[RMDB]
Chemical mapping of a 207-nucleotide RNA with 2A3. The reactions ran in a buffer of 150 mM KOAc, 10 mM MgCl2 and 150 mM bicine (pH 8.5), at 24 C. Source: RMDB library OK3TST, as collected in RNAgym. For 2A3 the reverse transcriptase was SuperScript II with manganese.

RNA sequence: GGGAACGACUCGAGUAGAGUCGAAAAACGGAGAGCUCGUAGGCCUGGGCGGCCUUGCGAAGAGAGGUGUGGGUGAGGGCGAAGGUGUCGCGGACCAUGAAUUUGAGGGAUUGGCACUUGAAAUCGGCGUCCCCGCAGCCCCCCUGCUCCCAGAGGGUACGUCAAGAAGGUUCGCCUUCUUGACGUAAAAAGAAACAACAACAACAAC
Reactivity to 2A3 in 0.01 (KOAc 150mM, MgCl2 10mM, bicine 150mM(pH8.5), 24C), signal-to-noise 1, nucleotides 027 to 156: a010c040g040g000a150g000a020g040c050u000c070g010u000a010g000g020c020c010u100g000g180g000c150g000g000c000c050u020u140g000c000g050a120a030g090a010g000a010g050g000u020g020u020g010g030g000u130g070a280g040g000g000c030g000a040a010g000g000u030g030u090c050g000c020g030g060a020c000c030a070u120g090a170a120u220u100u150g120a150g030g020g060a040u010u170g060g000c060a030c080u030u060g040a020a160a100u070c010g000g000c000g070u000c030c010c000c000g000c120a000g010c000c000c000c000c000c010u000g050c000u010c000c000c020a040g010a050g050g060g010